[RMDB]
RNA sequence: GGGAACGACUCGAGUAGAGUCGAAAAAUUCUAUAUAACACCAGUACACUGCUUUUCGCACAGGGUCGUUGUGUACCCUAUGUCAAAUUACAUUAUUUUGCCAAUUAUGCGGCACUUUAUGGUGGCGUCCUUAAGAUGGGUUCGCCCAUCUUAAGGAAAAAGAAACAACAACAACAAC
Reactivity to 2A3 in 0.01 (KOAc 150mM, MgCl2 10mM, bicine 150mM(pH8.5), 24C), signal-to-noise 1, nucleotides 027 to 126: a000u140u030c060u010a200u040a040u110a270a060c020a020c010c000a000g060u090a030c030a010c070u030g050c010u100u060u120u100c040g000c000a020c010a080g000g000g000u000c030g050u010u240g120u060g020u190a030c000c010c000u020a050u050g020u020c020a020a000a170u080u040a040c030a050u010u140a040u110u200u060u070g010c010c000a020a020u100u030a050u240g110c080g020g070c000a000c010u120u300u150a060u080g040g030u020g010g050c020g060
Reactivity to DMS in 0.01 (KOAc 150mM, MgCl2 10mM, bicine 150mM(pH8.5), 24C), signal-to-noise 3, nucleotides 027 to 126: a130u010u000c030u010a140u020a150u000a100a130c010a020c040c020a020g010u000a090c150a060c120u020g000c030u000u000u000u000c250g000c030a040c070a070g000g000g020u010c020g010u000u010g010u010g010u010a030c010c010c020u000a010u000g010u010c110a020a050a020u000u010a080c100a030u000u000a040u000u000u010u010g020c010c030a060a140u010u010a110u000g020c250g000g000c020a010c080u000u000u000a050u000g010g010u000g010g010c150g000